Chemical mapping of a 177-nucleotide RNA with 2A3 and DMS. For DMS the reverse transcriptase was MarathonRT. 2A3 adducts were read by reverse transcription with SuperScript II with manganese. The reactions ran in a buffer of 150 mM KOAc, 10 mM MgCl2 and 150 mM bicine (pH 8.5), at 24 C.

RNA sequence: GGGAACGACUCGAGUAGAGUCGAAAAGCUGUGUCAUAUGUGUGUCAAUAGGUGGCAGGGAGGAGAGUGACUAUGUCUAUGCUCAGUGUUCUGACCCAUGAACAUCAGAGUGAUUAGCAGCCUAACAUACUGAUGAUCAAUUCGUUGAUCAUCAGUAAAAAGAAACAACAACAACAAC
Reactivity to 2A3 in 0.01 (KOAc 150mM, MgCl2 10mM, bicine 150mM(pH8.5), 24C), signal-to-noise 9, nucleotides 027 to 126: g020c020u020g020u010g030u110c030a030u040a120u140g080u020g030u010g030u040c020a070a120u060a150g070g020u070g060g000c050a030g030g030g020a040g040g020a040g000a010g040u050g020a030c020u080a080u160g040u010c020u030a070u120g020c000u000c030a020g020u020g020u100u000c020u020g130a160c000c000c030a030u060g010a020a010c010a020u080c020a050g060a020g060u030g030a060u030u070a010g010c010a000g010c010c010u050a070a030c010a050
Reactivity to DMS in 0.01 (KOAc 150mM, MgCl2 10mM, bicine 150mM(pH8.5), 24C), signal-to-noise 9, nucleotides 027 to 126: g010c040u000g020u000g010u010c040a060u010a070u010g010u010g010u010g000u010c070a070a080u020a080g010g020u010g000g020c050a070g000g000g020a100g010g010a100g000a070g020u000g010a060c070u010a080u020g010u010c020u000a080u040g000c010u000c000a130g010u010g000u000u000c010u000g000a160c040c020c030a090u010g000a030a020c020a020u010c060a070g000a070g010u000g000a080u010u010a070g020c050a060g000c040c040u000a080a100c180a180